[RMDB]
Background:
Conditions: 150 mM KOAc, 10 mM MgCl2 and 150 mM bicine (pH 8.5), 24 C. The record gives the reactivity of an RNA of 177 nucleotides to 2A3 and DMS. High 2A3 reactivity points to a flexible backbone, as in loops and unpaired stretches. Reactivities are given for positions 27 through 126.
RNA sequence: GGGAACGACUCGAGUAGAGUCGAAAAGAGGAUAUCGCCGAGAACCAGCGAAAUGCCCAUCACCAGAAAUGGCGCCAUGGUCGCUGCGUAGAAGAAGUACAUCUGCCGGUCGAUGUCGGCGAACCACCAGUCUUUCACGGUUCGCCGUGAAAGACUGAAAAGAAACAACAACAACAAC
Reactivity to 2A3 in 0.01 (KOAc 150mM, MgCl2 10mM, bicine 150mM(pH8.5), 24C), signal-to-noise 2, nucleotides 027 to 126: g080a050g060g000a010u030a030u100c010g000c000c010g010a030g000a080a050c030c010a000g000c010g000a020a020a080u080g020c050c000c000a020u050c050a070c100c010a040g080a030a210a030u040g010g010c050g000c070c010a040u090g180g000u060c010g000c000u040g000c110g020u080a000g020a100a000g050a100a010g090u100a040c010a130u020c010u030g050c040c050g020g000u130c070g040a030u030g030u040c020g050g030c030g020a030a030c000c000a010c000
Reactivity to DMS in 0.01 (KOAc 150mM, MgCl2 10mM, bicine 150mM(pH8.5), 24C), signal-to-noise 3, nucleotides 027 to 126: g010a150g000g010a040u010a070u000c000g040c010c000g030a170g020a220a080c120c010a030g010c010g010a030a100a070u000g000c190c000c010a050u000c040a100c080c090a050g000a050a090a060u010g010g020c060g030c170c100a020u000g000g020u000c010g010c010u000g020c170g010u000a040g010a070a060g010a080a120g020u000a050c210a080u000c030u000g020c070c030g030g000u010c070g010a020u000g010u000c010g010g000c010g010a070a120c020c000a110c200